The record gives the reactivity of an RNA of 177 nucleotides to 2A3.
RNA sequence: GGGAACGACUCGAGUAGAGUCGAAAAAUAAGAAAACUCCUCAAACAAGGGAAAGUUCGAGGAGUUCGGCAUUUACCAAUAUUUAUAAAUGCCACUGGGGAUUUUCUAAGUGAACAAAGAUAUGGAUGACCUGUGAAAUAUUCGUAUUUCACAGGUCAAAAGAAACAACAACAACAAC
Reactivity to 2A3 in 0.01 (KOAc 150mM, MgCl2 10mM, bicine 150mM(pH8.5), 24C), signal-to-noise 3, nucleotides 027 to 126: a000u080a000a030g030a000a130a020a030c000u030c000c010u000c040a090a020a000c040a050a050g140g030g000a120a100a000g040u020u000c010g020a000g020g000a010g000u030u000c030g020g000c000a010u000u010u020a090c070c020a080a060u120a100u140u210u030a050u060a080a000a000u000g000c010c000a010c020u040g110g000g010g060a110u050u030u120u000c010u080a150a070g040u060g120a030a030c010a070a150a040g070a100u130a080u230g160g070a040u040
The RNA was probed in 150 mM KOAc, 10 mM MgCl2 and 150 mM bicine (pH 8.5) at 24 C. Reactivities are given for positions 27 through 126. It was measured as part of the RMDB library RFM100.